RNA sequence: GGGAACGACUCGAGUAGAGUCGAAAAGAUAUGGAUCCCAGAGACACGAUAAGCUGCGUUCGGAAACGAACGGCAGCUUUUGACGUGUCCUGGGAUCCUAAGUCAAACCAAGUCUUCGGACUUGGAACUGAUUUGGAGAGUUCGCUCUCCAAAUCAGAAAAGAAACAACAACAACAAC
Reactivity to DMS in 0.01 (KOAc 150mM, MgCl2 10mM, bicine 150mM(pH8.5), 24C), signal-to-noise 1, nucleotides 027 to 126: g000a030u000a300u040g000g010a000u000c000c000c000a020g000a300g000a040c000a010c000g010a180u000a010a040g010c010u000g000c000g020u010u010c000g000g010a100a060a220c000g010a010a010c000g040g000c000a010g000c000u040u000u000u000g010a210c120g000u010g020u000c000c000u000g010g010g000a000u000c000c000u010a020a090g010u000c010a120a130a210c000c000a000a000g000u020c010u000u000c270g070g000a040c000u010u000g000g000a030a250